[RMDB]
RNA sequence: GGGAACGACUCGAGUAGAGUCGAAAACUGCUAACACUAAAGUUCUUAGGAACAAGGGUGUUGAUUAUACUAAGAAGUUUCUUACAGUUGACGGUGUGCAAUAUUAUUGCUACACGUCUAAGGACACAGAGGUAUUACUUCGGUAAUACCAAAAGAAACAACAACAACAAC
Reactivity to DMS in 0.01 (KOAc 150mM, MgCl2 10mM, bicine 150mM(pH8.5), 24C), signal-to-noise 8, nucleotides 027 to 129: c060u060g020c120u030a000a010c000a000c010u010a070a190a170g030u000u020c010u030u070a130g070g020a040a020c020a050a220g050g000g030u020g000u000u000g000a110u050u040a080u060a100c180u010a040a130g010a060a240g000u010u020u060c000u000u000a170c060a130g000u000u010g030a020c000g020g020u000g000u030g030c020a000a030u040a140u040u030a030u000u000g030c010u040a000c030a030c020g020u000c020u030a050a070g020g030a080c190a100c200a030g030a100
Reactivity to 2A3 in 0.01 (KOAc 150mM, MgCl2 10mM, bicine 150mM(pH8.5), 24C), signal-to-noise 8, nucleotides 027 to 129: c020u060g030c050u060a030a010c010a010c000u070a130a070a070g000u030u000c000u040u100a140g100g060a000a000c030a040a050g270g020g010u020g010u010u000g000a020u030u170a170u040a190c160u140a080a110g110a110a010g100u010u010u000c010u020u070a110c060a130g060u040u060g040a000c050g040g080u060g010u020g090c000a000a000u120a090u300u150a110u120u040g000c030u070a010c060a000c000g000u000c010u010a000a030g050g030a030c020a000c000a090g120a040
Annotation
Structure probing data (DMS and 2A3) for a 170-nucleotide construct. 2A3 adducts were read by reverse transcription with SuperScript II with manganese.